[RMDB]
RNA sequence: GGGAACGACUCGAGUAGAGUCGAAAAAAAGCGCCUCUGCGAUCGCGUGUUCUCGGGCGCCGCUACCCACGAGCAGUACUUUCAGCAUCCCGCAGCCCCCGCAGGUCGUCGGCCGUCAGCACGCUCGCCAGAUCGUAGAUUUCGAUCUACGAUCUGGAAAAGAAACAACAACAACAAC
Reactivity to DMS in 0.01 (KOAc 150mM, MgCl2 10mM, bicine 150mM(pH8.5), 24C), signal-to-noise 1, nucleotides 027 to 126: a000a070a090g020c040g010c020c000u000c030u010g030c110g000a050u000c120g020c060g030u000g000u010u000c020u000c030g020g000g000c020g030c010c020g020c140u010a100c040c020c030a130c160g000a080g020c040a140g020u000a060c090u000u000u000c100a090g000c060a140u000c020c040c040g000c070a060g000c030c010c030c000c030g010c060a070g000g010u000c020g000u010c060g010g020c050c030g030u000c070a050g000c030a040c050g020c060u020c060g000
This 177-nucleotide RNA was probed chemically with DMS. The RNA was probed in 150 mM KOAc, 10 mM MgCl2 and 150 mM bicine (pH 8.5) at 24 C.